An RNA of 177 nucleotides, treated with DMS and 2A3 and read out base by base.

RNA sequence: GGGAACGACUCGAGUAGAGUCGAAAAGAAUUUUAGAAAAGCAAGGCCAUACAAGCAGCACCCGAAAUGCUGAGGGCUAAUUUGGGGUUUAGGAGCAACCUUUCCUGGAAAAAGUGGAAAGGAAAGAGACCUCCAUAGUAUUCGUACUAUGGAGGUCAAAAGAAACAACAACAACAAC
Reactivity to DMS in 0.01 (KOAc 150mM, MgCl2 10mM, bicine 150mM(pH8.5), 24C), signal-to-noise 2, nucleotides 027 to 126: g010a100a060u010u010u000u060a060g000a080a150a080a120g000c110a060a120g000g020c050c030a120u030a170c160a120a010g050c000a010g000c080a100c040c040c080g000a060a090a060u000g010c040u000g000a110g000g000g000c030u000a030a040u020u060u000g030g020g000g030u000u000u000a120g000g000a140g000c070a030a020c020c000u000u000u000c000c000u000g010g010a100a060a060a100a060g020u030g000g000a000a010a000g000g000a010a040a060g020a140
Reactivity to 2A3 in 0.01 (KOAc 150mM, MgCl2 10mM, bicine 150mM(pH8.5), 24C), signal-to-noise 2, nucleotides 027 to 126: g040a100a210u020u160u150u180a020g000a010a160a030a000g050c090a170a050g060g000c020c020a000u000a260c110a170a000g020c030a000g020c040a100c000c000c000g000a000a000a100u060g000c040u090g000a060g020g070g000c000u000a000a200u050u000u020g050g030g000g010u010u030u030a170g000g010a060g140c000a040a150c000c000u000u000u000c000c000u000g140g050a130a000a210a050a000g190u140g050g010a000a000a000g000g110a000a020a000g060a000